[RMDB]
RNA sequence: GGGAACGACUCGAGUAGAGUCGAAAAGCAUUAUAAAAUGUAUGGUAUUCCGCAUAUUGGCUUUGCGAAGUCGAUAUGGACAGGACAUAGUUAAAUUGCAAAUAACUAUGCAAGUAUUACUAUUUCCGUUUAGGGGUUGAUUCGUCAACCCCUAAACAAAAGAAACAACAACAACAAC
Reactivity to 2A3 in 0.01 (KOAc 150mM, MgCl2 10mM, bicine 150mM(pH8.5), 24C), signal-to-noise 4, nucleotides 027 to 126: g020c010a010u020u060a100u240a300a150a110a000u060g050u110a070u100g080g000u050a040u010u030c000c000g000c000a000u000a000u010u020g010g000c000u040u010u040g080c220g130a000a000g010u020c000g000a000u000a000u010g020g020a030c040a070g000g000a000c000a010u010a000g000u000u000a040a120a160u140u140g030c060a000a030a120u040a040a050c040u040a030u000g020c020a020a060g040u090a060u130u030a020c020u000a050u030u010u020c020c000
Reactivity to DMS in 0.01 (KOAc 150mM, MgCl2 10mM, bicine 150mM(pH8.5), 24C), signal-to-noise 3, nucleotides 027 to 126: g020c010a000u010u000a140u080a080a090a040a010u000g030u000a060u020g000g030u020a070u010u000c040c010g010c020a020u010a010u010u000g010g000c000u010u000u000g000c160g020a010a000g020u000c000g000a000u000a020u010g000g030a100c040a140g010g010a130c020a010u010a000g000u000u020a020a030a080u010u030g000c290a070a070a060u000a030a040c080u040a050u000g010c070a060a080g010u010a070u010u010a010c020u000a050u000u020u010c010c040